The data come from the RNA Mapping Database (RMDB), library M2RFPK. The record gives the reactivity of an RNA of 207 nucleotides to 2A3. The reactions ran in a buffer of 150 mM KOAc, 10 mM MgCl2 and 150 mM bicine (pH 8.5), at 24 C. Values cover nucleotides 27 to 156. For 2A3, 795 sequencing reads were counted.
RNA sequence: GGGAACGACUCGAGUAGAGUCGAAAAACGAGGUACGCUUCGAAAAUAUGACCGGUGUCAUAGCCUCUAGCACACAGAGGUCGCGUGGGUUCAACUCCCCCCCUUUUCCGAGGGUAUCGGAAACCAAAAAACACAAUUUGGUUCGCCAAAUUGUGAAGAACGGUCUUUACUUCGGUAAAGACCGUUCAAAAGAAACAACAACAACAAC
Reactivity to 2A3 in 0.01 (KOAc 150mM, MgCl2 10mM, bicine 150mM(pH8.5), 24C), signal-to-noise 1, nucleotides 027 to 156: a000c060g010a010g030g040u050a010c080g000c040u000u120c070g080a150a080a020a030u050a000u050g020a030c020c080g090g050u160g010u090c030a030u050a030g000c020c000u000c000u050a070g070c110a010c010a000c000a120g030a000g040g000u020c010g000c020g050u030g000g040g060u100u140c020a050a030c030u030c020c000c000c000c000c010c030u000u070u030u000c000c000g000a000g000g000g040u100a030u010c010g000g000a000a010a010c010c010a000a180a000a000a000a000c000a000c000a000a000u000u000u000g010g020u000u030c070g000c050c000a000a000a000u000u000g020u010g000a020a000